[RMDB]
RNA sequence: GGGAACGACUCGAGUAGAGUCGAAAAGCUGGCCACACUUUCGAAUUGCGGGGACUCCCUAAAGCUCGAUUCUACCAACCAGCCGGGGAAACUUGUCUGGGGCCGAUGUUAACAGCAUUGGGUAUGGUAACAACGAAGAGAGAUAUGCUGGCUUGCCGGAAAUUGUUAAGUUCGCUUAACAAUUUCCAAAAGAAACAACAACAACAAC
Reactivity to 2A3 in 0.01 (KOAc 150mM, MgCl2 10mM, bicine 150mM(pH8.5), 24C), signal-to-noise 6, nucleotides 027 to 156: g010c010u010g020g010c060c000a080c010a030c080u100u240u200c070g060a200a130u180u180g050c080g000g020g010g110a130c060u150c030c010c020u110a120a130a040g020c000u000c010g010a010u020u000c000u010a020c000c010a020a010c000c000a000g000c010c010g000g000g010g030a040a060a060c010u020u030g000u000c000u000g040g010g020g000c000c000g000a000u000g040u220u080a060a040c040a050g000c010a000u010u010g020g000g010u130a300u260g010g000u000a020a020c020a000a020c150g020a030a010g020a000g000a000g010a010u020a030u150g020c030u000g000g000c000u010u020g050c030c030
Reactivity to DMS in 0.01 (KOAc 150mM, MgCl2 10mM, bicine 150mM(pH8.5), 24C), signal-to-noise 2, nucleotides 027 to 156: g040c020u000g000g020c010c080a030c040a120c050u010u020u010c060g010a140a140u010u000g000c030g000g000g050g020a180c010u010c020c020c000u000a050a130a120g000c100u000c020g000a260u000u000c030u010a040c010c070a140a250c030c010a030g010c010c020g100g030g010g000a160a090a180c030u000u040g010u000c000u010g000g000g000g030c000c000g010a020u000g000u000u010a080a120c100a110g050c010a050u000u030g000g000g010u000a080u010g020g020u000a050a090c060a010a060c110g030a040a040g000a300g010a050g010a140u000a070u010g000c020u000g010g020c060u020u010g010c000c100